The record gives the reactivity of an RNA of 177 nucleotides to DMS and 2A3.
The 2A3 profile rests on 1,240 reads.
It was measured as part of the RMDB library OK2TRN.
Values cover nucleotides 27 to 126.
The DMS profile rests on 6,077 reads.
RNA sequence: GGGAACGACUCGAGUAGAGUCGAAAAUUUGUAGGUCUCGAGGGAAGCACUAAGGAUCAGGUUGGGGGCACAGUGUGUCCGAGGAGGAAUCCUCCUGAUAGGAACUGGAAUGUGCCUUGAAGGGGACUCCAGAGAAAGAUUUCGAUCUUUCUCUGGAAAAAGAAACAACAACAACAAC
Reactivity to DMS in 0.01 (KOAc 150mM, MgCl2 10mM, bicine 150mM(pH8.5), 24C), signal-to-noise 5, nucleotides 027 to 126: u010u000u020g010u010a070g010g010u000c040u000c050g010a120g010g000g020a090a070g010c070a080c090u010a090a110g020g010a090u000c060a030g010g000u000u000g010g010g000g000g000c020a040c020a080g010u000g010u010g030u000c010c030g000a050g010g000a050g010g010a130a160u010c040c000u010c000c020u000g000a130u010a060g010g000a090a050c040u000g000g000a110a110u010g010u000g010c010c010u000u000g000a160a070g000g000g000g000a120c180
Reactivity to 2A3 in 0.01 (KOAc 150mM, MgCl2 10mM, bicine 150mM(pH8.5), 24C), signal-to-noise 1, nucleotides 027 to 126: u140u060u110g060u050a080g000g000u000c050u030c110g050a050g010g010g030a090a040g040c040a010c050u070a120a050g100g010a100u040c030a000g110g030u160u130g090g000g020g040g000c000a020c030a070g120u040g000u040g030u140c020c010g020a010g000g020a000g020g060a120a060u020c000c010u020c000c000u040g000a040u090a060g040g010a090a000c010u010g000g100a200a090u110g010u040g010c000c020u000u040g010a010a010g070g000g000g000a020c020